[RMDB]
RNA sequence: GGGAACGACUCGAGUAGAGUCGAAAAAAAUGGAAAACUCCAGAAAUAAGCAAUUCAUGAGUUUUAAAUUGCUCACUGUUCUGUGUAGCAUGAUGGCAUCUCGUGCUGUCCUGCCCUGUCUUGUCCAGUCUACUAAUAGGUUCGCCUAUUAGUAGACAAAAGAAACAACAACAACAAC
Reactivity to 2A3 in 0.01 (KOAc 150mM, MgCl2 10mM, bicine 150mM(pH8.5), 24C), signal-to-noise 4, nucleotides 027 to 126: a000a010a040u160g000g030a090a150a050a050c060u030c050c010a020g050a010a050a020u130a060a010g020c010a010a070u060u040c030a050u180g100a080g170u050u060u060u170a050a110a050u040u050g000c000u000c020a040c060u110g050u110u040c020u020g060u030g040u100a010g000c020a020u050g010a030u040g020g000c010a050u020c070u050c190g060u020g000c010u000g010u020c000c020u010g020c010c010c000u050g050u020c040u070u090g040u020c020c020a010
Reactivity to DMS in 0.01 (KOAc 150mM, MgCl2 10mM, bicine 150mM(pH8.5), 24C), signal-to-noise 6, nucleotides 027 to 126: a040a070a070u010g000g000a080a070a070a080c100u000c080c050a060g010a040a030a070u000a110a080g000c050a050a030u000u000c070a080u010g000a140g010u000u010u000u000a030a040a040u000u000g010c010u000c050a060c210u010g000u000u010c030u000g000u010g010u010a050g020c010a030u000g000a050u000g010g020c060a060u010c160u000c160g020u010g000c020u010g010u000c020c050u000g010c010c030c040u000g010u000c060u000u000g000u000c050c060a130